The record gives the reactivity of an RNA of 177 nucleotides to 2A3 and DMS. The 2A3 profile rests on 1,363 reads. DMS adducts were read by reverse transcription with MarathonRT. Conditions: 150 mM KOAc, 10 mM MgCl2 and 150 mM bicine (pH 8.5), 24 C. 2A3 is a SHAPE reagent: it acylates the 2'-hydroxyl of flexible nucleotides of all four kinds. For DMS, 2,045 sequencing reads were counted. Source: RMDB library RFM100, as collected in RNAgym.

RNA sequence: GGGAACGACUCGAGUAGAGUCGAAAAGUGGUGGGAGCCCCUGUUGGGGGCGCUAUACCACAGCCGUUGAUGAGCAUGGCCGUUCUUAGGUGUAAGCCCUGCCGGUUGUCUUGAUAGACAAAAUUUUUACUUGUAGAGUAUUCGUACUCUACAAGUAAAAAGAAACAACAACAACAAC
Reactivity to 2A3 in 0.01 (KOAc 150mM, MgCl2 10mM, bicine 150mM(pH8.5), 24C), signal-to-noise 3, nucleotides 027 to 126: g020u010g000g000u020g000g040g030a020g010c010c000c000c020u080g170u260u300g070g000g000g020g020c010g020c000u080a070u090a140c010c010a020c010a020g040c000c020g030u060u140g070a160u090g010a050g040c040a030u070g010g020c020c030g060u130u060c020u040u070a090g000g020u040g050u140a050a060g010c000c000c010u030g020c020c020g050g000u060u030g010u050c030u100u100g080a150u160a140g030a050c030a020a090a020a010u030u030u000u000
Reactivity to DMS in 0.01 (KOAc 150mM, MgCl2 10mM, bicine 150mM(pH8.5), 24C), signal-to-noise 1, nucleotides 027 to 126: g050u020g010g050u000g000g000g020a180g020c000c000c000c030u000g060u010u020g000g050g000g030g020c000g000c020u030a060u070a080c000c000a000c000a090g000c030c000g010u010u010g010a120u000g000a110g010c120a130u010g070g000c020c010g000u000u020c070u010u050a200g020g000u010g000u010a040a070g000c060c000c000u030g010c130c010g010g030u010u030g000u000c060u000u030g000a100u030a060g000a030c040a060a030a090a070u000u000u000u000